The record gives the reactivity of an RNA of 177 nucleotides to DMS and 2A3.
For 2A3 the reverse transcriptase was SuperScript II with manganese.
For 2A3, 1,793 sequencing reads were counted.
[RMDB]
RNA sequence: GGGAACGACUCGAGUAGAGUCGAAAAACUAACAGCCGCAAGUCCCGUUGCGCUGGAUGCUCGUCGUGCACCGCCAACGACAGCAUCAAUCCGUCGAACGGCAGCACACCGGCAUGAUUGGCCACCAGAGCUGGUAAAUGUUCGCAUUUACCAGCUCAAAAGAAACAACAACAACAAC
Reactivity to DMS in 0.01 (KOAc 150mM, MgCl2 10mM, bicine 150mM(pH8.5), 24C), signal-to-noise 1, nucleotides 027 to 126: a090c100u000a090a200c140a100g080c050c010g050c050a090a180g000u000c020c000c000g030u020u000g000c020g030c010u000g030g010a030u000g020c000u020c220g050u000c010g000u000g020c090a140c140c130g000c020c050a140a100c010g000a010c020a030g000c020a000u000c030a090a160u000c030c020g000u000c120g010a050a190c030g000g000c030a050g000c050a050c070a030c070c090g000g030c070a100u000g010a090u000u010g020g010c010c030a110c110c070a100
Reactivity to 2A3 in 0.01 (KOAc 150mM, MgCl2 10mM, bicine 150mM(pH8.5), 24C), signal-to-noise 2, nucleotides 027 to 126: a020c090u100a090a040c030a040g040c020c040g070c090a050a040g060u070c040c000c000g010u000u030g060c000g000c010u000g070g010a000u010g000c010u060c210g010u010c000g000u000g000c070a180c190c090g100c080c010a040a010c040g000a020c000a000g000c010a000u040c010a000a130u000c010c040g040u030c030g120a110a130c030g030g000c010a000g010c000a010c010a040c000c000g030g000c050a030u050g010a150u040u240g050g000c030c020a000c010c010a070